Source: RMDB libraries RFM100 and RFMREP, as collected in RNAgym. Structure probing data (2A3 and DMS) for a 177-nucleotide construct. For 2A3 the reverse transcriptase was SuperScript II with manganese. DMS adducts were read by reverse transcription with MarathonRT.

RNA sequence: GGGAACGACUCGAGUAGAGUCGAAAACCGUGUCAAUCCACUAUUAUGGCACGGCGUGUUAAAAGGGAGGAAGGGUCAGACCGCAGGACUUGCGGUGCGGUAUUGUGGAGACAUACCGCAAGGUUUCUGUUCAACCUUUAUUCGUAAAGGUUGAACAAAAAGAAACAACAACAACAAC
Reactivity to 2A3 in 0.01 (KOAc 150mM, MgCl2 10mM, bicine 150mM(pH8.5), 24C), signal-to-noise 9, nucleotides 027 to 126: c000c000g010u000g000u000c030a070a100u080c040c070a090c120u110a150u300u090a110u140g010g000c000a000c000g000g010c030g010u150g030u040u140a110a130a050a030g040g040g020a110g040g070a130a030g030g000g000u030c030a020g060a080c000c010g000c000a010g060g120a140c040u070u030g000c010g000g000u010g000c010g000g010u010a030u050u140g040u060g020g020a050g010a020c020a030u030a020c000c000g000c000a000a010g050g000u000u030u000c010
Reactivity to DMS in 0.01 (KOAc 150mM, MgCl2 10mM, bicine 150mM(pH8.5), 24C), signal-to-noise 8, nucleotides 027 to 126: c000c000g020u000g010u000c010a040a100u010c090c080a070c120u010a130u020u020a110u000g010g000c010a010c000g000g010c090g010u000g000u020u020a050a080a100a090g000g000g010a120g000g020a110a090g010g000g000u010c130a080g000a060c000c020g010c000a020g010g010a120c100u030u000g010c000g000g000u000g020c010g010g000u000a010u010u000g020u000g000g020a100g010a070c260a050u000a010c010c000g010c010a080a040g000g000u000u000u000c040